[RMDB]
RNA sequence: GGGAACGACUCGAGUAGAGUCGAAAAAUUGUUUGUGCGUAGUAAGGAAGAAGACGGAUUUGCCUUCUACCCUGCUUGCACUAAUGGUCAUGCUGUACCGACUCUCUUUAGACUUAAGGGAGGUGCAAAAGGCUCAUCUUCGGAUGAGCCAAAAGAAACAACAACAACAAC
Reactivity to 2A3 in 0.01 (KOAc 150mM, MgCl2 10mM, bicine 150mM(pH8.5), 24C), signal-to-noise 2, nucleotides 027 to 129: a000u080u090g020u040u000u060g010u000g000c000g000u020a000g000u040a060a040g020g000a010a000g000a000a000g010a000c030g110g150a250u160u150u300g000c000c000u000u020c000u010a000c010c000c000u000g000c010u000u070g000c000a020c020u030a000a000u000g080g000u070c110a030u170g130c070u040g010u030a000c020c000g030a040c010u000c000u000c000u030u010u020a130g050a290c040u110u110a030a000g010g000g000a010g000g030u020g000c000a040a060a110a100
Reactivity to DMS in 0.01 (KOAc 150mM, MgCl2 10mM, bicine 150mM(pH8.5), 24C), signal-to-noise 2, nucleotides 027 to 129: a000u000u030g010u040u000u040g020u000g000c000g020u040a020g010u010a060a050g010g010a220a020g000a010a000g030a080c000g070g000a300u030u130u080g000c010c000u000u010c000u020a030c070c020c000u020g020c000u000u030g000c020a000c000u000a020a030u030g000g110u030c000a150u050g010c110u010g030u060a130c040c050g000a160c040u030c000u000c000u030u010u060a100g010a090c300u110u000a000a020g010g000g020a000g040g040u040g020c040a080a070a050a150